[RMDB]
RNA sequence: GGGAACGACUCGAGUAGAGUCGAAAACUGAAGCUGCAAGAGACAUACUUGGACUUUCUGAAGGUUUCCACAACACUGAUAGUUCUCAAACAGCAAGGCAUCUUUUAGAGAUGCUUAAUGAGCAGGAAACACCAAUCCCUUUCGAGGGAUUGGUGUUAAAAGAAACAACAACAACAAC
Reactivity to DMS in 0.01 (KOAc 150mM, MgCl2 10mM, bicine 150mM(pH8.5), 24C), signal-to-noise 1, nucleotides 027 to 126: c020u030g000a050a090g020c010u000g030c020a000a110g010a070g000a120c120a100u010a080c070u000u040g000g020a070c030u000u000u030c090u010g000a130a130g010g000u000u000u020c000c050a060c180a010a060c130a060c180u030g020a040u000a110g020u010u000c000u020c030a080a150a130c050a010g000c050a080a050g010g000c000a020u000c000u000u000u030u000a120g020a040g020a010u000g000c020u000u010a040a090u010g010a150g000c060a070g000g000a070
Reactivity to 2A3 in 0.01 (KOAc 150mM, MgCl2 10mM, bicine 150mM(pH8.5), 24C), signal-to-noise 1, nucleotides 027 to 126: c020u050g030a030a000g060c030u090g000c020a000a070g020a020g120a100c040a080u180a130c010u110u090g070g000a030c010u050u160u120c070u260g110a090a070g100g000u050u140u030c020c030a080c030a020a110c110a040c000u050g030a120u020a100g020u190u000c000u000c000a030a090a000c030a000g020c060a040a040g010g000c000a000u020c000u000u210u190u090a130g000a000g020a080u020g020c050u000u000a080a050u130g000a000g110c000a010g170g000a090
The data come from the RNA Mapping Database (RMDB), library OK2TST.
Chemical mapping of a 177-nucleotide RNA with DMS and 2A3.
Values cover nucleotides 27 to 126.